[RMDB]
RNA sequence: GGGAACGACUCGAGUAGAGUCGAAAAGAUAUGGAGUCCUCUCCAUCGAUUACAUCGAUCUCGGAAACGAGGGAGUAAUUUGGAGAGGGACUCCUAAGUCAAAGGCCAUAGGUUCGCCUAUGGCCAACGCUAUAAUAACCUUCGGGUUAUUAUAGCGAAAAGAAACAACAACAACAAC
Reactivity to 2A3 in 0.01 (KOAc 150mM, MgCl2 10mM, bicine 150mM(pH8.5), 24C), signal-to-noise 5, nucleotides 027 to 126: g020a020u070a050u180g000g010a020g010u010c000c000u000c010u000c010c000a060u170c100g040a020u010u040a030c080a260u300c110g090a140u020c020u000c000g050g000a080a090a070c000g010a010g010g000g000a040g010u010a010a020u080u110u090g010g000a020g020a130g020g000g010a000c000u000c000c000u010a070a010g020u000c060a090a050a130g010g000c000c000a000u010a000g060g040u060u080c300g100c040c010u010a000u000g000g020c000c000a000a000
Reactivity to DMS in 0.01 (KOAc 150mM, MgCl2 10mM, bicine 150mM(pH8.5), 24C), signal-to-noise 5, nucleotides 027 to 126: g000a060u010a300u000g000g000a020g000u000c000c000u000c000u000c000c000a030u010c190g010a020u000u010a000c000a300u000c150g010a070u010c000u000c000g000g000a110a120a200c010g000a010g000g010g000a030g010u000a000a010u000u000u000g010g000a020g010a040g020g020g000a010c000u000c000c000u000a000a070g010u000c040a100a140a130g010g010c000c000a000u000a000g000g010u000u010c230g020c000c000u000a000u000g000g000c000c000a000a010
About this RNA:
Structure probing data (2A3 and DMS) for a 177-nucleotide construct. The reactions ran in a buffer of 150 mM KOAc, 10 mM MgCl2 and 150 mM bicine (pH 8.5), at 24 C.